[RMDB]
RNA sequence: GGGAACGACUCGAGUAGAGUCGAAAAUGACAAGUAUUACGGGAAGAAGUACAAGGGCACUUCGGCUUUGUCAAGGCCCACAAUACCUGGCACUUACUGUGAUGUCUGAAGCAUGAGUUGAAGUGUUACAGGAAAUGAAAGAAGGAAAGGCAGAGGGCGUGUCUCGUCAAUUCGUUGACGAGACACGAAAAGAAACAACAACAACAAC
Reactivity to 2A3 in 0.01 (KOAc 150mM, MgCl2 10mM, bicine 150mM(pH8.5), 24C), signal-to-noise 2, nucleotides 027 to 156: u130g120a010c030a000a100g040u050a130u180u160a020c080g090g020g000a000a020g020a070a010g020u010a000c000a000a000g000g000g020c090a080c040u010u000c040g000g010c010u090u040u110g000u060c040a040a020g040g000c020c070c100a070c050a050a100u160a060c000c010u070g070g000c030a010c040u110u110a180c100u000g060u100g080a020u100g100u020c070u150g030a020a000g040c000a030u130g020a070g070u020u080g030a020a000g000u000g000u000u010a050c050a000g020g030a040a040a040u040g030a020a010a010g100a020a020g000g000a000a000a010g000g000c000a000g000a000g020g040g010
The record gives the reactivity of an RNA of 207 nucleotides to 2A3. High 2A3 reactivity points to a flexible backbone, as in loops and unpaired stretches.